[RMDB]
RNA sequence: GGGAACGACUCGAGUAGAGUCGAAAAGAAAGAAAGAAAGAUAUCUGACAGAAUGACGGAUUCGAUCGUUGUGGUCGGCGGGCCACCACGUCAUUCCUUCGCACUGUCUCCGGGCAGACCGCCAUAAAAAAGCGGAUCUACUUCGGUAGAUCCGCAACGAUGCACUUGUGUUCGCACAAGUGCAUCGAAAAGAAACAACAACAACAAC
Reactivity to 2A3 in 0.01 (KOAc 150mM, MgCl2 10mM, bicine 150mM(pH8.5), 24C), signal-to-noise 1, nucleotides 027 to 156: g040a000a040a000g050a020a110a010g060a050a110a000g070a060u090a090u110c080u110g010a000c010a050g170a090a160u110g020a040c020g000g000a010u030u120c100g010a040u160c050g020u020u030g000u000g000g000u020c070g000g090c060g050g000g000c000c000a000c040c010a010c000g000u000c020a020u050u030c000c000u060u050c070g010c030a050c050u000g010u030c000u040c050c090g010g030g000c010a010g010a110c060c020g000c030c010a030u270a040a090a020a000a000a000g000c000g000g000a000u000c000u010a000c000u000u070c160g020g000u000a000g000a000u000c000c000g010c000a000a000
The record gives the reactivity of an RNA of 207 nucleotides to 2A3. The reactions ran in a buffer of 150 mM KOAc, 10 mM MgCl2 and 150 mM bicine (pH 8.5), at 24 C. 2A3 adducts were read by reverse transcription with SuperScript II with manganese.